[RMDB]
Chemical mapping of a 177-nucleotide RNA with DMS and 2A3.
DMS adducts were read by reverse transcription with MarathonRT.
The RNA was probed in 150 mM KOAc, 10 mM MgCl2 and 150 mM bicine (pH 8.5) at 24 C.
RNA sequence: GGGAACGACUCGAGUAGAGUCGAAAAGGCAACGGCGGCAGUUCGUGCAGAGGGAGGGGCGGCACGCGUGGAUUGGCGCUGAUCGUGUCGCCGCAUGGCGGCGUGCGUCGCUACAUGCCGCUGCACAACCGAUGCAGUACUUCGGUACUGCAUCGGUAAAAGAAACAACAACAACAAC
Reactivity to DMS in 0.01 (KOAc 150mM, MgCl2 10mM, bicine 150mM(pH8.5), 24C), signal-to-noise 2, nucleotides 027 to 126: g050g030c030a070a070c080g020g020c050g000g000c080a070g030u000u000c110g010u000g000c020a030g010a160g010g010g000a130g020g010g000g010c000g000g020c010a020c090g020c130g070u010g000g030a120u010u000g010g010c030g010c040u000g030a070u010c110g000u010g000u000c010g010c010c020g000c110a020u010g010g010c000g000g000c020g010u010g030c040g020u000c090g040c050u000a060c050a090u000g020c010c040g000c020u010g000c090a070c100a120
Reactivity to 2A3 in 0.01 (KOAc 150mM, MgCl2 10mM, bicine 150mM(pH8.5), 24C), signal-to-noise 1, nucleotides 027 to 126: g090g060c010a030a030c000g070g010c000g000g030c000a000g030u030u090c040g030u030g020c040a020g030a050g040g060g020a070g050g090g000g020c020g020g030c030a020c010g040c020g020u080g010g070a100u100u190g080g010c020g000c040u050g020a100u120c050g000u000g060u030c010g010c000c020g000c030a040u150g020g010c010g000g000c010g030u120g060c060g040u060c030g010c020u000a020c040a030u080g050c020c030g030c000u010g000c040a010c020a080